[RMDB]
RNA sequence: GGGAACGACUCGAGUAGAGUCGAAAAGAUAUGGAACACGAACUACCUCCAUCUUACCAAUGAUGAGAAUAGUUGUCGGAAACGACAACUAUUCUUUGAGGUAUUUUGAGGCGUGUUCCUAAGUCUACAAAUAUGAAUACUUCGGUAUUCAUAUUUGAAAAGAAACAACAACAACAAC
Reactivity to DMS in 0.01 (KOAc 150mM, MgCl2 10mM, bicine 150mM(pH8.5), 24C), signal-to-noise 8, nucleotides 027 to 126: g010a020u000a130u010g000g000a020a010c000a010c000g000a070a030c050u020a300c010c000u000c030c060a020u000c030u000u000a010c010c000a050a080u000g000a040u020g010a000g000a020a010u000a000g010u000u000g020u000c010g000g000a020a020a050c000g020a010c000a000a000c000u000a000u000u000c000u000u000u000g010a300g000g000u000a000u000u000u000u000g010a050g000g000c000g010u000g010u000u000c000c000u000a000a040g010u000c000u000a210
Reactivity to 2A3 in 0.01 (KOAc 150mM, MgCl2 10mM, bicine 150mM(pH8.5), 24C), signal-to-noise 4, nucleotides 027 to 126: g000a000u010a000u100g000g010a000a000c010a000c010g030a100a040c050u160a120c300c010u050c050c030a020u000c020u040u090a010c000c010a110a260u300g290a070u180g010a190g000a010a000u000a000g010u000u010g000u000c000g000g020a070a010a000c010g000a000c000a000a010c000u000a000u000u000c000u000u000u010g010a010g000g010u010a010u000u020u010u020g000a010g010g000c010g000u010g000u000u000c000c000u000a010a000g000u020c000u050a060